RNA sequence: GGGAACGACUCGAGUAGAGUCGAAAAACCCCGUUCGCGGGGUGUCAAGCGUACUACCUGACAUAUGAUGACCUAGCCUACCCACCAUCGUCCCAAAUAGGACGAUGAGGGCUAGCAAGUAUAGUCAGGUAUCGCAUAGGUGCCGAUUCGUCGGCAAAACUCUGAUUGAGUUCGCUCAAUCAGAGUUAAAAGAAACAACAACAACAAC
Reactivity to DMS in 0.01 (KOAc 150mM, MgCl2 10mM, bicine 150mM(pH8.5), 24C), signal-to-noise 2, nucleotides 027 to 156: a040c000c010c000c030g010u000u010c280g040c080g000g070g010g040u020g000u020c090a110a250g000c010g010u000a060c160u000a010c000c000u010g020a030c010a110u000a040u010g000a150u000g020a110c300c000u000a010g010c010c010u000a040c020c030c010a300c060c000a020u000c010g020u000c000c000c010a080a100a220u020a110g030g010a010c000g010a000u000g010a050g000g010g000c000u010a020g000c010a070a160g010u010a060u000a070g000u020c010a010g010g020u000a000u000c000g000c000a180u000a010g050g010u000g000c000c000g000a080u000u000c210g010u020c000g030g040c000a020a000
Reactivity to 2A3 in 0.01 (KOAc 150mM, MgCl2 10mM, bicine 150mM(pH8.5), 24C), signal-to-noise 2, nucleotides 027 to 156: a000c030c000c000c000g020u060u070c300g000c010g030g000g000g000u010g020u090c110a130a070g000c000g000u060a120c050u020a000c010c000u000g000a000c020a030u030a010u040g230a170u140g030a040c000c030u000a010g010c000c000u090a120c190c120c000a030c010c010a000u030c000g040u000c020c040c040a100a300a070u300a140g020g000a000c000g000a000u000g000a000g000g000g020c000u000a000g010c010a160a050g000u070a000u100a010g000u010c000a000g000g000u000a000u000c010g000c010a000u040a030g010g140u100g040c000c000g000a000u030u110c270g130u000c050g090g000c010a000a110